[RMDB]
RNA sequence: GGGAACGACUCGAGUAGAGUCGAAAAUUGAUGUCUUGGCCUGUCGUUUCGGGGUAAAUAUGACGAAGUGAAGUUGGAACACGUCCCACGGCAUUACCACUUGCCAGAGCGGAUACAUUUGAAUCCAUACGUGGAAACAUUUCGAUGUUUCCACGUAAAAAGAAACAACAACAACAAC
Reactivity to DMS in 0.01 (KOAc 150mM, MgCl2 10mM, bicine 150mM(pH8.5), 24C), signal-to-noise 3, nucleotides 027 to 126: u030u020g010a050u020g010u030c030u000u000g020g020c020c030u010g010u000c050g000u000u010u000c060g000g000g010g000u020a040a040a090u020a110u010g030a020c040g000a110a080g020u000g000a060a060g000u000u000g000g030a090a120c130a070c040g020u010c020c020c020a140c130g000g000c050a020u000u000a120c120c030a080c120u010u020g010c020c020a090g020a120g000c140g000g000a070u010a050c050a100u000u020u010g010a070a070u020c000c010a170
Reactivity to 2A3 in 0.01 (KOAc 150mM, MgCl2 10mM, bicine 150mM(pH8.5), 24C), signal-to-noise 4, nucleotides 027 to 126: u100u080g030a020u070g030u010c050u030u060g040g000c000c020u010g010u050c020g050u030u030u060c030g030g000g010g000u060a040a180a030u210a060u130g070a020c040g050a080a000g030u030g080a130a010g020u110u060g040g020a070a060c050a010c090g030u030c000c000c010a020c000g000g030c000a010u030u080a150c050c000a060c090u040u100g010c010c010a010g000a020g080c060g040g020a040u040a070c030a130u090u110u200g040a070a000u000c000c000a000

Source information:
An RNA of 177 nucleotides, treated with DMS and 2A3 and read out base by base. In probing experiments dimethyl sulfate is read out at A N1 and C N3, which are open when not base-paired. The reactions ran in a buffer of 150 mM KOAc, 10 mM MgCl2 and 150 mM bicine (pH 8.5), at 24 C. Values cover nucleotides 27 to 126.